[RMDB]
RNA sequence: GGGAACGACUCGAGUAGAGUCGAAAAAUCAAUGCCUCACUGCCUUUUACCUUCUUUUAGGUUAGUUGCAAUGUUGACACAGACAUUUAGAAGAUGGUAUGUCUGAAGGGACUUAUGUUUAGGCACCCGCGUCUAACUACUUCGGUAGUUAGACGCGAAAAGAAACAACAACAACAAC
Reactivity to DMS in 0.01 (KOAc 150mM, MgCl2 10mM, bicine 150mM(pH8.5), 24C), signal-to-noise 2, nucleotides 027 to 126: a050u000c170a070a110u000g010c000c000u000c290a080c100u000g030c020c020u000u000u000u000a030c060c000u000u000c100u000u000u000u000a030g010g010u000u000a050g030u000u000g010c060a080a080u000g030u000u000g020a140c080a110c050a190g000a060c200a030u000u000u000a020g000a030a030g020a080u010g000g000u000a030u000g000u020c060u000g010a130a090g010g010g000a090c080u000u010a050u000g020u010u010u000a010g000g010c010a090c170c040
Reactivity to 2A3 in 0.01 (KOAc 150mM, MgCl2 10mM, bicine 150mM(pH8.5), 24C), signal-to-noise 1, nucleotides 027 to 126: a000u120c050a040a110u100g000c000c000u040c020a000c010u040g080c010c010u110u190u060u070a050c010c010u000u000c010u000u020u000u000a000g050g030u020u060a030g010u120u020g000c040a140a300u270g110u180u100g160a030c000a000c000a040g040a010c030a000u020u050u090a060g010a050a000g040a030u090g040g070u050a020u080g180u020c010u000g110a050a040g010g020g020a040c000u140u150a100u130g110u110u010u020a010g010g040c000a020c010c040

This 177-nucleotide RNA was probed chemically with DMS and 2A3. Values cover nucleotides 27 to 126. The 2A3 profile rests on 816 reads. For DMS, 1,258 sequencing reads were counted.